[RMDB]
The record gives the reactivity of an RNA of 177 nucleotides to DMS and 2A3.
For 2A3, 1,710 sequencing reads were counted.
It was measured as part of the RMDB library TTRDEL.
RNA sequence: GGGAACGACUCGAGUAGAGUCGAAAAGAUAUGGACGACGAUCUGACUACCCACCAACGGUGUCGGAAACGACACCAGUUGAGGUCAGAUUAGUCCUAAGUCAAACGCCCGCGUUCGCGCGGGCGAAGAAAACAAACAGGUUCGCCUGUUUGUUUUCAAAAGAAACAACAACAACAAC
Reactivity to DMS in 0.01 (KOAc 150mM, MgCl2 10mM, bicine 150mM(pH8.5), 24C), signal-to-noise 1, nucleotides 027 to 126: g020a010u000a200u010g020g020a030c020g000a150c290g020a010u000c000u000g000a000c020u010a060c070c060c120a300c110c000a000a010c000g000g000u000g010u000c000g020g000a050a050a070c000g000a020c000a020c000c000a020g040u010u000g000a080g030g010u000c010a010g010a030u000u000a160g010u000c000c020u010a010a110g010u000c000a080a180a230c020g050c020c000c000g000c000g000u000u000c140g020c020g030c080g000g000g030c040g010a000a020
Reactivity to 2A3 in 0.01 (KOAc 150mM, MgCl2 10mM, bicine 150mM(pH8.5), 24C), signal-to-noise 1, nucleotides 027 to 126: g010a020u060a030u130g000g020a020c060g050a040c300g030a050u000c000u000g010a010c010u110a130c090c070c110a040c010c000a040a010c000g010g000u000g010u020c020g020g030a080a020a010c000g010a010c000a010c020c030a000g010u010u020g000a030g020g010u000c000a000g000a010u010u050a020g000u000c010c000u020a090a020g030u090c000a170a120a200c100g000c000c000c000g010c000g010u050u080c300g000c020g060c000g210g230g000c000g000a010a000